[RMDB]
RNA sequence: GGGAACGACUCGAGUAGAGUCGAAAAAUGAACGUGGUGGGCGUAAGUUAGUAGAAGAUCUAAUGGUACGCGGUGGGUUUUCGACUGUACUCGAAACCACCACCAGCACCAAGUCGUUCCCACCGAAGUCAUGUAAUCCAUUCGUGGAUUACAUGACAAAAGAAACAACAACAACAAC
Reactivity to 2A3 in 0.01 (KOAc 150mM, MgCl2 10mM, bicine 150mM(pH8.5), 24C), signal-to-noise 4, nucleotides 027 to 126: a000u250g000a040a000c050g040u030g000g000u010g000g030g020c010g010u000a030a030g000u010u020a010g020u030a040g070a300a030g030a100u030c000u020a020a020u040g190g040u040a010c030g010c040g020g000u030g000g020g000u020u010u020u060c000g000a000c010u090g060u150a010c010u010c010g000a030a010a010c000c000a010c000c000a010c020c000a020g020c000a010c000c010a020a010g000u000c000g000u000u000c000c000c000a010c000c030g090a170a010
Reactivity to DMS in 0.01 (KOAc 150mM, MgCl2 10mM, bicine 150mM(pH8.5), 24C), signal-to-noise 3, nucleotides 027 to 126: a050u000g010a080a050c070g030u010g000g020u010g000g010g000c010g010u020a080a280g010u000u000a020g010u000a060g000a140a120g000a130u000c000u000a010a040u000g000g010u000a010c030g010c030g010g060u000g010g000g010u000u000u010u000c000g010a030c040u000g020u000a030c060u010c000g000a040a030a070c070c030a040c000c010a110c110c110a070g010c010a030c010c040a050a050g010u000c000g000u000u000c000c000c000a060c120c090g000a090a110